Chemical mapping of a 177-nucleotide RNA with 2A3 and DMS.
The 2A3 profile rests on 2,599 reads.
[RMDB]
RNA sequence: GGGAACGACUCGAGUAGAGUCGAAAAAGCUUUCUGAGGCUCGUGACCUGGGGCACGGUCGUCCCGGAAGUUCAGCCUUUCCCUCCGUACAACGGAGCCAUCAGACGGGACACCUCAUACAUCCCAGCUUCAUGUACUCGUUCGCGAGUACAUGAAGAAAAGAAACAACAACAACAAC
Reactivity to 2A3 in 0.01 (KOAc 150mM, MgCl2 10mM, bicine 150mM(pH8.5), 24C), signal-to-noise 2, nucleotides 027 to 126: a000g050c060u060u150u040c030u040g000a040g030g000c030u010c120g050u100g020a060c020c000u000g040g020g020g030c020a000c070g010g020u020c050g010u010c020c000c020g000g050a060a020g040u130u150c070a040g000c030c000u010u050u050c010c000c030u040c020c000g070u120a230c040a170a050c190g060g000a000g020c020c000a160u120c010a020g060a040c020g000g000g000a010c010a020c010c030u060c050a030u080a140c040a080u000c000c000c010a010g030
Reactivity to DMS in 0.01 (KOAc 150mM, MgCl2 10mM, bicine 150mM(pH8.5), 24C), signal-to-noise 4, nucleotides 027 to 126: a090g010c080u000u010u010c070u000g010a090g000g020c140u010c080g020u000g020a070c140c030u010g010g000g020g020c070a110c140g000g010u000c090g010u000c010c010c010g010g000a090a100g010u010u010c150a080g000c070c050u000u010u000c050c040c020u000c020c060g010u010a070c260a120a110c060g010g000a050g020c110c030a060u000c040a040g020a210c050g020g000g010a040c010a130c020c020u000c070a060u010a130c150a100u010c000c000c000a140g000